The record gives the reactivity of an RNA of 177 nucleotides to DMS.
RNA sequence: GGGAACGACUCGAGUAGAGUCGAAAAGAUAUGGACAUGCGGAGGCGCACUGCCACUAUUCCAAACUGCAUCGGAAACGAUGCAGUUUGGAAUAUGCAGUGAACUACGCUGACGCAUGUCCUAAGUCCUUAUAAUGCGACUUCGGUCGCAUUAUAAGAAAAGAAACAACAACAACAAC
Reactivity to DMS in 0.01 (KOAc 150mM, MgCl2 10mM, bicine 150mM(pH8.5), 24C), signal-to-noise 2, nucleotides 027 to 126: g010a080u010a210u000g020g010a030c000a010u000g020c000g000g030a300g000g000c000g000c030a000c000u000g000c020c000a000c050u000a000u000u010c000c000a010a040a040c000u030g020c000a000u000c000g010g000a180a080a220c000g010a000u000g010c000a010g000u000u000u000g010g000a000a000u000a000u000g010c000a000g010u000g000a090a060c140u010a300c050g010c020u010g010a300c000g000c000a010u000g020u010c000c000u000a030a050g010u000c040
The DMS profile rests on 1,717 reads. For DMS the reverse transcriptase was MarathonRT. It was measured as part of the RMDB library TTRINS.